[RMDB]
RNA sequence: GGGAACGACUCGAGUAGAGUCGAAAAGAUAUGGAAGAGCAUCGAGCAACAGCUCGGAAACGAGACAUGCUUAGAUGUCUCUUCCUAAGUCAAAACAAACCAUAUUCCUUCGGGAAUAUGGUUUGAACAUGGUUAUCAUCUUCGGAUGAUAACCAUGAAAAGAAACAACAACAACAAC
Reactivity to DMS in 0.01 (KOAc 150mM, MgCl2 10mM, bicine 150mM(pH8.5), 24C), signal-to-noise 4, nucleotides 027 to 126: g000a040u010a300u010g000g010a000a010g000a020g010c030a020u000c010g010a020g010c000a030a060c250a180g010c010u000c000g020g000a030a080a200c010g000a010g000a030c080a170u000g010c000u000u000a110g010a010u000g000u030c000u000c000u000u000c000c000u000a010a080g000u000c050a090a090a130a160c010a000a010a000c000c000a010u000a000u000u000c000c000u000u020c240g020g000g000a030a000u000a000u000g000g000u000u000u000g010a080a140
Reactivity to 2A3 in 0.01 (KOAc 150mM, MgCl2 10mM, bicine 150mM(pH8.5), 24C), signal-to-noise 2, nucleotides 027 to 126: g000a010u070a020u160g000g020a010a000g000a010g010c000a000u010c010g030a000g020c010a010a160c070a140g010c010u000c020g000g030a060a030a010c010g000a010g040a030c050a090u080g030c020u030u090a140g010a010u010g010u000c000u000c000u000u000c000c010u000a020a020g010u000c020a010a030a080a180c020a000a000a000c010c000a000u000a010u000u020c000c010u020u120c300g150g000g000a000a010u020a000u010g000g050u000u000u000g000a000a000